[RMDB]
RNA sequence: GGGAACGACUCGAGUAGAGUCGAAAACCUGAGUACCGUGGGUUGGAAUUCUCGCGGGAAGCUGGGGGUCAUCAACCCCCAAGGCUAAAUACGUCCCGAGUCCGAUAGCGCAAUAGUAGGGUGACCGUGGGUGAUAAGGAUUCGUCCUUAUCACCCAAAAAGAAACAACAACAACAAC
Reactivity to DMS in 0.01 (KOAc 150mM, MgCl2 10mM, bicine 150mM(pH8.5), 24C), signal-to-noise 3, nucleotides 027 to 126: c000c000u010g010a150g000u010a100c020c010g020u000g000g000g000u000u000g040g000a160a120u000u010c020u000c010g000c060g000g000g000a090a090g000c060u000g010g000g000g030g000u000c170a120u070c270a140a110c000c010c000c000c000a030a030g000g000c010u000a070a130a070u020a080c150g010u000c020c010c020g010a140g010u010c020c010g000a070u000a110g000c020g000c080a100a060u020a080g010u010a120g000g000g020u000g020a070c030c040g010
Reactivity to 2A3 in 0.01 (KOAc 150mM, MgCl2 10mM, bicine 150mM(pH8.5), 24C), signal-to-noise 2, nucleotides 027 to 126: c020c030u060g020a050g040u040a040c030c000g000u010g010g030g000u050u090g050g060a040a150u150u050c010u020c000g030c020g040g000g010a000a000g020c040u030g000g000g000g000g000u010c100a150u060c000a290a090c000c000c000c000c030a000a020g000g000c000u080a020a120a080u160a090c040g070u050c000c030c000g000a030g020u000c000c000g010a040u090a060g030c070g000c010a030a060u010a130g120u030a060g010g010g060u010g050a020c000c040g020